[RMDB]
RNA sequence: GGGAACGACUCGAGUAGAGUCGAAAAUUCGCCCCAAGCCUGCAGUGCCACAGGUACCAAAGUCGCCGAUCCUCCCGGGAGGGCGCAGGCGGCCUACAGAGGAGGAGAUGCGCGUGAAACGGGCGGCUCAGUCACGUUGAUUCGUCAACGUGACUGAAAAAGAAACAACAACAACAAC
Reactivity to 2A3 in 0.01 (KOAc 150mM, MgCl2 10mM, bicine 150mM(pH8.5), 24C), signal-to-noise 1, nucleotides 027 to 126: u020u020c000g000c080c000c000c000a100a040g060c000c000u000g000c030a010g060u050g110c000c000a100c060a120g070g000u010a000c000c050a260a000a030g060u080c000g000c000c030g040a050u030c000c000u000c000c000c050g010g020g020a150g030g010g060c030g000c000a010g180g100c000g030g040c020c020u040a020c030a060g070a270g020g020a000g070g000a020g020a070u100g030c030g030c030g070u100g030a000a050a000c040g000g000g030c070g000g000c020
Reactivity to DMS in 0.01 (KOAc 150mM, MgCl2 10mM, bicine 150mM(pH8.5), 24C), signal-to-noise 2, nucleotides 027 to 126: u000u000c050g010c000c000c000c100a110a210g000c000c010u000g010c040a110g000u010g000c110c150a190c080a000g000g000u010a150c020c020a070a070a120g000u020c010g020c010c040g010a140u010c000c000u000c010c000c050g010g010g040a100g010g000g010c010g010c080a080g010g050c080g000g030c000c000u000a090c030a070g000a180g010g010a020g020g000a040g010a170u000g000c100g020c080g010u020g000a050a120a120c200g010g000g010c030g000g010c280